Overview
An RNA of 177 nucleotides, treated with DMS and 2A3 and read out base by base. 2A3 adducts were read by reverse transcription with SuperScript II with manganese. The reactions ran in a buffer of 150 mM KOAc, 10 mM MgCl2 and 150 mM bicine (pH 8.5), at 24 C.
[RMDB]
RNA sequence: GGGAACGACUCGAGUAGAGUCGAAAACGGCGCAUAGUUACGCAAUACUUCUGGCUCAAACGCCCAGUUUUCGUUGAUCUGCGAUGGGAACUCCACGUAGUCGCGUGGCACGUUUGUGCCAGAAAACCGGUAACGAAGCAUUCGUGCUUCGUUACCGAAAAGAAACAACAACAACAAC
Reactivity to DMS in 0.01 (KOAc 150mM, MgCl2 10mM, bicine 150mM(pH8.5), 24C), signal-to-noise 2, nucleotides 027 to 126: c180g050g000c040g040c070a140u010a150g030u000u000a060c070g000c060a140a060u010a100c180u000u010c000u010g000g000c010u000c020a020a020a020c020g010c300c040c030a110g010u000u020u010u000c010g000u000u010g010a060u000c120u000g010c000g040a090u000g010g010g000a100a100c180u000c000c000a030c000g010u000a080g000u000c100g000c030g030u000g020g000c220a060c000g000u000u000u000g000u000g000c000c000a040g010a010a010a070a080c130
Reactivity to 2A3 in 0.01 (KOAc 150mM, MgCl2 10mM, bicine 150mM(pH8.5), 24C), signal-to-noise 2, nucleotides 027 to 126: c020g050g000c040g060c060a130u040a210g060u050u130a050c030g000c060a080a040u090a140c050u040u020c010u020g010g010c000u010c040a010a010a000c000g000c050c040c030a080g010u020u030u050u170c020g000u040u230g060a090u080c000u090g030c010g180a300u020g010g000g040a100a070c040u000c010c010a000c010g010u050a040g050u040c020g000c010g010u030g000g000c050a000c050g020u010u050u030g010u010g050c000c010a000g000a000a010a000a000c010
Source: RMDB library OK2TST, as collected in RNAgym. The DMS profile rests on 1,591 reads.